[RMDB]
RNA sequence: GGGAACGACUCGAGUAGAGUCGAAAAGGACGAGCUGGAUCCAACCCGUGCAUUACGGGUUGGAUCUAGCUCGAAGGCGUGUUGUUAGAAUUUCGGAGAAUUCUGGGUUCCGAAGAGUACGCCAUGACUACUGCUUUGUAUUCGUACAAGGUAGUAGAAAAGAAACAACAACAACAAC
Reactivity to DMS in 0.01 (KOAc 150mM, MgCl2 10mM, bicine 150mM(pH8.5), 24C), signal-to-noise 9, nucleotides 027 to 126: g010g010a250c020g000a010g010c000u000g000g000a010u000c000c000a000a010c000c000c000g030u000g010c300a150u010u010a010c010g010g000g010u000u000g000g000a000u000c000u000a000g010c000u000c000g010a030a050g010g010c010g020u000g010u000u000g010u000u000a110g000a070a070u000u000u010c010g010g000a040g000a100a090u010u000c050u000g000g010g010u000u000c010c030g000a030a040g000a090g010u000a010c010g010c000c010a110u000g000a270